The record gives the reactivity of an RNA of 177 nucleotides to DMS and 2A3. The 2A3 profile rests on 5,630 reads. Source: RMDB library OK1LIB, as collected in RNAgym.
[RMDB]
RNA sequence: GGGAACGACUCGAGUAGAGUCGAAAAAGCGAGUACGUACUCGUCGAAAAGACGAGUACUCCGCGCGCAAAGUACUCGCAGCUCAUAAAUCAAAGUAUCCGAUAAGGAUACGCGCGCGGACUGAGCAAAUGCAUCAUUACUUCGGUAAUGAUGCAUUAAAAGAAACAACAACAACAAC
Reactivity to DMS in 0.01 (KOAc 150mM, MgCl2 10mM, bicine 150mM(pH8.5), 24C), signal-to-noise 2, nucleotides 027 to 126: a040g000c000g030a030g020u010a010c030g040u030a000c000u000c000g000u000c000g000a100a070a140a150g010a000c020g000a010g000u000a010c000u000c040c000g010c040g000c000g030c000a120a140a170g000u000a020c000u000c020g000c000a090g020c000u000c010a050u040a070a070a040u040c140a090a090a110g010u000a000u000c000c000g010a140u070a070a270g000g000a010u000a000c000g000c000g000c000g000c000g020g010a070c300u000g000a040g000c030a100
Reactivity to 2A3 in 0.01 (KOAc 150mM, MgCl2 10mM, bicine 150mM(pH8.5), 24C), signal-to-noise 6, nucleotides 027 to 126: a000g000c000g000a000g000u010a010c060g000u020a010c000u000c000g000u010c000g030a160a120a020a000g000a000c000g000a000g000u000a000c000u000c000c000g000c000g000c000g000c070a170a060a060g000u000a000c000u000c020g000c010a020g010c000u020c030a070u140a200a210a130u180c080a150a120a040g010u010a000u000c000c010g070a150u110a300a060g010g000a000u000a000c000g000c000g010c000g000c000g000g010a020c080u190g030a070g060c040a050
About this RNA: For DMS, 3,409 sequencing reads were counted. The RNA was probed in 150 mM KOAc, 10 mM MgCl2 and 150 mM bicine (pH 8.5) at 24 C.